[RMDB]
RNA sequence: GGGAACGACUCGAGUAGAGUCGAAAAAAGAUAUGGAUCAUGUGGAGAGGGUUCCUCGCGAAGAACAAAGGUCGGAAACGACCUUUGGGAGCGAGAGACCCUCGAUGAAACAUGAUCCUAAGUCAAAGUGUGACUUAGAGUUCGCUCUAAGUCACACAAAAGAAACAACAACAACAAC
Reactivity to DMS in 0.01 (KOAc 150mM, MgCl2 10mM, bicine 150mM(pH8.5), 24C), signal-to-noise 1, nucleotides 027 to 126: a120a100g020a060u010a300u000g000g010a000u000c000a000u000g020u000g020g010a080g000a000g040g020g020u000u010c060c000u000c010g010c010g010a140a220g000a110a280c000a000a020a000g020g010u000c000g010g000a100a120a170c000g000a000c000c000u000u000u020g000g000g000a110g040c000g000a000g010a110g020a000c000c000c010u000c010g000a010u020g020a210a070a040c000a000u040g000a020u010c000c000u000a020a080g040u000c040a100a100a260
Structure probing data (DMS) for a 177-nucleotide construct. Conditions: 150 mM KOAc, 10 mM MgCl2 and 150 mM bicine (pH 8.5), 24 C.